This 177-nucleotide RNA was probed chemically with 2A3 and DMS. For 2A3 the reverse transcriptase was SuperScript II with manganese. The reactions ran in a buffer of 150 mM KOAc, 10 mM MgCl2 and 150 mM bicine (pH 8.5), at 24 C. Source: RMDB library OK2TRN, as collected in RNAgym.
RNA sequence: GGGAACGACUCGAGUAGAGUCGAAAAGCGCGCGCGAUAUAUUAUCGCUAUUAUAUAAUAGCGAUAUAUGCGCGCCGCGCGGCGAUAAUAUAUGCGCGCAUAUAUCGCUAUUAUCGCAUACGCAUACCUAUUUGUGCCUAUUCGUAGGCACAAAUAGAAAAGAAACAACAACAACAAC
Reactivity to 2A3 in 0.01 (KOAc 150mM, MgCl2 10mM, bicine 150mM(pH8.5), 24C), signal-to-noise 2, nucleotides 027 to 126: g040c000g000c010g020c000g000c010g060a010u020a010u010a030u280u220a020u080c010g000c020u020a100u270u030a120u070a030u030a100a000u000a010g000c000g010a000u000a000u000a010u020g000c020g000c000g000c000c000g010c000g020c000g080g020c010g030a040u070a220a040u070a060u100a060u300g010c010g000c010g000c060a000u040a040u030a000u090c000g000c000u000a000u020u000a010u000c010g000c020a020u070a160c010g000c050a040u080a240c000
Reactivity to DMS in 0.01 (KOAc 150mM, MgCl2 10mM, bicine 150mM(pH8.5), 24C), signal-to-noise 3, nucleotides 027 to 126: g010c030g030c110g000c150g000c010g000a100u000a040u000a050u010u000a020u000c010g000c020u000a050u010u000a130u010a080u000a020a000u000a010g000c000g000a010u000a010u010a010u020g020c000g000c010g000c000c060g000c040g010c110g020g010c010g020a030u000a050a040u010a100u000a100u000g010c020g030c050g010c040a040u010a040u000a010u000c010g020c010u000a000u000u010a000u000c130g000c090a070u000a130c060g010c030a120u010a120c120